[RMDB]
RNA sequence: GGGAACGACUCGAGUAGAGUCGAAAAAACCCGUUGAUUGAAAUUGAACCGUCCUGUUAUCGAAAGAUAGGCAGAUGAUACGAAAUGUGUGACAGCAUGGGAAGUAAAGGCAGACCGUGGUUCCCUUAAAAUCGUCGAAUCUUCGGAUUCGACGAAAGUGAGUAUACAUCUUCGGAUGUAUACUCACAAAAGAAACAACAACAACAAC
Reactivity to 2A3 in 0.01 (KOAc 150mM, MgCl2 10mM, bicine 150mM(pH8.5), 24C), signal-to-noise 1, nucleotides 027 to 156: a000a000c010c000c000g030u050u040g110a300u030u070g000a110a120a070u100u040g020a080a050c050c010g030u060c010c000u010g030u080u030a030u030c010g030a040a040a070g040a080u000a040g020g020c000a010g040a080u030g020a030u080a100c020g030a050a160a020u030g020u010g010u020g100a020c030a030g000c040a030u050g000g100g000a060a000g040u160a050a150a100g030g000c040a060g030a030c000c030g040u040g010g000u000u000c000c000c000u030u000a040a040a070a120u030c020g000u010c000g000a010a000u010c030u000u030c120g100g000a010u000u010c010g000a000c000g000a000a000a000
Reactivity to DMS in 0.01 (KOAc 150mM, MgCl2 10mM, bicine 150mM(pH8.5), 24C), signal-to-noise 2, nucleotides 027 to 156: a110a090c000c010c010g030u000u000g020a170u030u000g040a070a150a080u000u000g000a140a080c040c010g020u000c020c010u020g040u000u000a060u000c050g030a140a070a100g010a050u000a070g050g010c100a040g000a120u000g070a080u000a120c090g000a040a050a030u020g040u010g020u000g000a200c090a130g070c040a040u000g010g010g030a100a110g000u010a030a100a060g000g020c050a070g020a040c040c050g040u000g020g010u000u010c000c000c020u000u020a030a100a080a160u010c000g000u000c050g030a030a010u000c010u000u010c300g000g000a060u000u000c000g000a000c010g020a000a010a090

An RNA of 207 nucleotides, treated with 2A3 and DMS and read out base by base.
Source: RMDB library M2RFPK, as collected in RNAgym.
Reactivities are given for positions 27 through 156.
2A3 is a SHAPE reagent: it acylates the 2'-hydroxyl of flexible nucleotides of all four kinds.